[RMDB]
RNA sequence: GGGAACGACUCGAGUAGAGUCGAAAAGAUAUGGAUGGGAACUAAGCUAGAGGGACUACCCACCUAUGCUGUCGGAAACGACAGACAUAGAGGUCCUACCCACCUAGCUUAGUUCCCAUCCUAAGUCCACAAUACGAGUGUUCGCACUCGUAUUGUGAAAAGAAACAACAACAACAAC
Reactivity to DMS in 0.01 (KOAc 150mM, MgCl2 10mM, bicine 150mM(pH8.5), 24C), signal-to-noise 4, nucleotides 027 to 126: g000a090u000a300u000g000g010a000u000g010g020g000a010a010c000u000a000a000g010c010u020a020g000a300g000g020g020a060c090u010a060c050c060c140a300c150c000u000a030u000g000c000u000g010u010c000g010g010a080a070a220c000g000a010c000a000g010a100c000a000u000a030g000a110g010g000u010c040c010u000a160c030c050c060a300c120c000u000a000g010c000u010u000a010g020u010u000c020c000c000a010u000c000c000u000a030a130g010u010c060

Structure probing data (DMS) for a 177-nucleotide construct. It was measured as part of the RMDB library TTRINS.